This 177-nucleotide RNA was probed chemically with DMS and 2A3. 2A3 adducts were read by reverse transcription with SuperScript II with manganese.
[RMDB]
RNA sequence: GGGAACGACUCGAGUAGAGUCGAAAAUUUAAGAGCGUAGAUGUCUCUGUCACGAUACGAGUAAGUGACUCUCGUGUACUACUGACGAAUCAGACAGAGACAUUUAUGCUCAGUGUCAGUCAAGGAAACAAAUAAGAGGUUUCGACCUCUUAUUUGUAAAAGAAACAACAACAACAAC
Reactivity to DMS in 0.01 (KOAc 150mM, MgCl2 10mM, bicine 150mM(pH8.5), 24C), signal-to-noise 9, nucleotides 027 to 126: u010u010u010a110a110g000a010g010c010g030u000a010g010a010u000g000u000c000u000c000u000g010u000c000a110c210g000a020u000a020c010g010a110g010u010a020a050g010u010g000a040c020u010c230u000c230g000u010g020u000a020c010u000a040c010u000g000a150c020g000a170a010u000c010a160g000a010c000a000g000a010g010a010c000a000u000u000u000a000u000g010c000u000c000a030g010u010g010u000c080a060g010u000c090a060a100g010g010a120a110
Reactivity to 2A3 in 0.01 (KOAc 150mM, MgCl2 10mM, bicine 150mM(pH8.5), 24C), signal-to-noise 6, nucleotides 027 to 126: u140u150u090a160a030g000a000g000c000g000u000a000g010a020u010g010u010c000u010c000u000g000u010c020a020c260g010a010u020a030c020g010a010g010u040a280a100g010u090g180a040c010u020c020u030c110g160u140g020u110a020c000u010a000c000u040g170a110c010g030a030a030u020c000a000g010a000c000a010g000a000g000a000c000a000u000u000u000a000u000g010c000u000c000a000g000u010g040u030c040a020g020u040c040a060a080g110g050a180a190